[RMDB]
RNA sequence: GGGAACGACUCGAGUAGAGUCGAAAAUUGCCGAACAACGACAUGUCGCCCCCAUGUGGGUGGGAAAAGACUCAGAAAUUAUCUUGUUCUUAUACCGAUACGACAGAUGUUAUCAAGUGUAAUAGUAGACAUAGUGGUGAUUCGUCACCACUAUGUCAAAAGAAACAACAACAACAAC
Reactivity to 2A3 in 0.01 (KOAc 150mM, MgCl2 10mM, bicine 150mM(pH8.5), 24C), signal-to-noise 3, nucleotides 027 to 126: u060u050g090c010c000g030a050a020c030a040a000c020g050a010c020a100u060g020u030c020g010c010c000c010c010c040a050u080g070u240g060g000g000u070g000g000g000a040a150a000a020g010a000c030u000c110a050g080a080a170a070u220u110a090u090c040u090u070g110u080u000c020u030u080a100u070a100c000c020g070a080u050a150c040g000a000c010a050g100a090u130g030u050u060a070u120c060a170a050g040u020g010u180a060a080u080a100g170u050a010
Reactivity to DMS in 0.01 (KOAc 150mM, MgCl2 10mM, bicine 150mM(pH8.5), 24C), signal-to-noise 3, nucleotides 027 to 126: u000u000g010c010c010g000a090a090c130a050a070c060g010a080c060a070u000g020u010c020g000c120c010c000c010c070a110u010g060u010g020g000g020u010g000g020g000a130a090a060a040g010a040c070u040c110a080g010a060a130a080u010u000a080u000c020u000u000g010u000u000c000u000u000a060u010a190c040c040g000a080u030a100c050g010a060c080a050g000a120u000g000u000u000a080u020c070a090a160g000u020g010u010a010a090u000a080g020u020a120

Conditions: 150 mM KOAc, 10 mM MgCl2 and 150 mM bicine (pH 8.5), 24 C. An RNA of 177 nucleotides, treated with 2A3 and DMS and read out base by base. For 2A3 the reverse transcriptase was SuperScript II with manganese. Source: RMDB library OK2TRN, as collected in RNAgym. Reactivities are given for positions 27 through 126.